[RMDB]
RNA sequence: GGGAACGACUCGAGUAGAGUCGAAAAGGAAGGUAGAGUCCUUGUGUCUUGUGCAUCUGUGAACAGCACUGGUAUGAUUUAAAGGAAAAUUGAGCCAAAUUUUCCGGCAGUCAGUUACCCCAUCCCCACCGGGGUAGGAGUCUGGCAGCCGCAGCUCGUCCUACAAAUGGUUCGCCAUUUGUAGGACAAAAGAAACAACAACAACAAC
Reactivity to 2A3 in 0.01 (KOAc 150mM, MgCl2 10mM, bicine 150mM(pH8.5), 24C), signal-to-noise 1, nucleotides 027 to 156: g090g010a060a020g060g000u190a030g030a030g080u030c000c020u020u020g060u020g040u040c090u130u090g020u030g000c020a040u020c100u180g000u090g080a120a040c060a060g060c020a000c030u010g040g000u040a030u140g070a080u060u160u230a080a130a110g080g040a000a030a000a150u070u060g030a010g060c060c020a080a060a010u080u070u010u010c030c000g010g020c010a000g000u040c000a010g000u030u100a030c010c000c000c000a060u080c000c000c000c050a090c040c160g000g020g040g000u010a090g010g010a020g010u030c000u040g010g040c000a020g000c000c050g000c000a000g020c030u060c070